[RMDB]
The data come from the RNA Mapping Database (RMDB), library TTRINS. An RNA of 177 nucleotides, treated with DMS and read out base by base. The RNA was probed in 150 mM KOAc, 10 mM MgCl2 and 150 mM bicine (pH 8.5) at 24 C.
RNA sequence: GGGAACGACUCGAGUAGAGUCGAAAAGAUAUGGAACGUCCAUUCAACAAUGAUGAUCUAGCUACUGUAGAAUCGGAAACGAUUCUACAGUAGCUAGAUUUGAGUUGUUAUGGAGCGUUCCUAAGUCGUGGACCAUUAGGUUCGCCUAAUGGUCCACAAAAGAAACAACAACAACAAC
Reactivity to DMS in 0.01 (KOAc 150mM, MgCl2 10mM, bicine 150mM(pH8.5), 24C), signal-to-noise 1, nucleotides 027 to 126: g000a080u000a300u010g000g000a010a000c000g020u020c000c000a010u000u010c270a020a010c000a000a010u020g000a300u000g000a030u000c000u000a000g000c000u000a010c010u010g050u000a000g020a010a000u000c020g020g030a090a060a210c010g020a020u000u000c000u000a000c030a000g000u000a010g000c000u000a000g000a000u000u000u000g010a300g000u010u000g030u000u010a010u000g000g000a090g030c060g030u010u000c000c000u000a020a070g000u000c110